[RMDB]
RNA sequence: GGGAACGACUCGAGUAGAGUCGAAAAUACCCAAGUGGCAAACUGCACAUGGGUCAUGUGCGUAACUAUACCAUUGGCGAUGUAAUUAGCCGUUUUUACCGUUUAAAAGGCGAAACCGUAUUACAAAUAAAUUUAUCGGAUUCGUCCGAUAAAUUUAAAAAGAAACAACAACAACAAC
Reactivity to DMS in 0.01 (KOAc 150mM, MgCl2 10mM, bicine 150mM(pH8.5), 24C), signal-to-noise 4, nucleotides 027 to 126: u000a180c030c000c010a160a120g040u000g010g010c050a060a110a090c160u010g000c010a010c020a010u010g020g020g000u010c040a020u000g020u000g000c040g010u000a080a100c170u010a100u010a110c000c010a020u000u000g010g000c050g000a150u000g010u000a020a050u000u000a140g020c050c010g010u000u000u000u000u020a070c030c020g010u010u000u020a060a050a110a160g000g010c080g010a020a030a050c100c220g010u010a040u000u000a040c040a080a070a170
Reactivity to 2A3 in 0.01 (KOAc 150mM, MgCl2 10mM, bicine 150mM(pH8.5), 24C), signal-to-noise 2, nucleotides 027 to 126: u160a010c000c000c030a000a000g090u060g050g000c040a060a050a030c080u150g000c000a000c000a040u030g060g020g300u190c040a010u000g030u010g000c000g060u030a050a010c050u050a040u060a270c050c010a060u060u080g090g020c050g080a040u110g020u020a030a060u000u040a060g000c010c000g000u000u010u000u030u060a090c000c000g000u000u030u300a070a190a020a020g050g020c030g010a050a030a000c020c010g060u040a060u020u030a070c030a020a130a090